[RMDB]
Background: The record gives the reactivity of an RNA of 207 nucleotides to DMS and 2A3. The reactions ran in a buffer of 150 mM KOAc, 10 mM MgCl2 and 150 mM bicine (pH 8.5), at 24 C. Source: RMDB library M2RFPK, as collected in RNAgym. The 2A3 profile rests on 1,989 reads.
RNA sequence: GGGAACGACUCGAGUAGAGUCGAAAAUAAGCAAAAGACAACCACCUUUCCCGCUGACAAUAGCGUUAUCCCUCUGCACUUCGGUAAUAUGAGGGGACAGUAAAUCCCGCAAGGAUGAGAAUGUGAUUAAACAGUUACAGCUUCGGCUGUAACUGAAGUGCUAUAGGAUGUUCGCAUCCUAUAGCACAAAAGAAACAACAACAACAAC
Reactivity to DMS in 0.01 (KOAc 150mM, MgCl2 10mM, bicine 150mM(pH8.5), 24C), signal-to-noise 2, nucleotides 027 to 156: u000a080a120g080c080a090a060a090a140g010a120c090a150a100c060c050a180c040c000u000u010u000c000c040c000g020c040u000g010a140c080a080a110u000a070g050c060g000u000u000a070u000c000c000c000u000c010u000g000c030a060c050u000u010c220g020g010u030a090a180u000a120u010g000a040g040g020g000g020a020c020a060g010u000a100a110a120u000c000c010c040g050c150a080a070g010g030a070u000g000a080g000a070a120u000g020u000g000a090u000u000a140a060a190c000a020g000u000u000a000c000a010g020c010u010u000c300g050g010c000u000g000u000a000a000c000u010g000a010a040
Reactivity to 2A3 in 0.01 (KOAc 150mM, MgCl2 10mM, bicine 150mM(pH8.5), 24C), signal-to-noise 3, nucleotides 027 to 156: u110a010a000g050c070a070a090a000a000g070a060c060a030a020c040c010a040c020c060u000u040u020c000c020c010g000c070u020g020a060c070a090a190u050a150g060c040g030u070u070a070u150c010c000c000u000c040u040g010c050a030c040u080u070c120g060g000u040a040a030u160a060u300g010a000g000g000g020g010a000c000a000g000u020a020a050a060u030c000c000c010g100c060a010a050g030g020a030u090g020a010g030a090a100u120g070u040g050a050u150u170a030a110a060c000a010g000u000u000a010c000a000g020c000u000u050c120g100g000c000u000g000u010a000a000c000u000g000a000a000